[RMDB]
RNA sequence: GGGAACGACUCGAGUAGAGUCGAAAAAAGCGUAACCUCUUGUAAAUCUCCAACACUAAGCUUGGUUACAGCUCUGUUGAAGAAUUGCAGGUGGUAGGUGAAAUCAUGGACUCUUCGGAGUCCAUGACUUUUUGUGUAUGUUCGCAUACACAAAAAGAAAAGAAACAACAACAACAAC
Reactivity to 2A3 in 0.01 (KOAc 150mM, MgCl2 10mM, bicine 150mM(pH8.5), 24C), signal-to-noise 3, nucleotides 027 to 126: a000a000g060c020g010u060a080a070c000c000u010c010u020u000g010u010a000a040a080u020c010u000c010c010a010a010c020a010c050u140a060a000g030c020u090u120g100g200u300u200a130c060a050g000c010u000c020u030g010u000u010g000a010a010g000a030a030u020u000g000c000a000g000g020u020g000g000u020a040g040g050u080g060a080a060a060u040c000a000u000g000g000a000c000u020c000u030u040c230g090g000a000g000u000c010c000a000u000g000a000
Reactivity to DMS in 0.01 (KOAc 150mM, MgCl2 10mM, bicine 150mM(pH8.5), 24C), signal-to-noise 5, nucleotides 027 to 126: a070a120g010c050g010u000a160a060c000c000u000c010u010u000g010u000a010a020a060u000c000u000c010c010a010a020c010a030c190u010a100a050g020c020u000u010g040g010u010u010a080c170a020g010c000u000c180u000g020u000u000g010a020a010g010a030a070u000u000g010c010a010g010g000u000g000g020u000a060g010g020u000g000a070a070a150u000c000a000u000g010g000a020c000u000c000u000u010c190g020g000a010g000u000c000c000a000u000g000a020
Chemical mapping of a 177-nucleotide RNA with 2A3 and DMS.
2A3 is a SHAPE reagent: it acylates the 2'-hydroxyl of flexible nucleotides of all four kinds.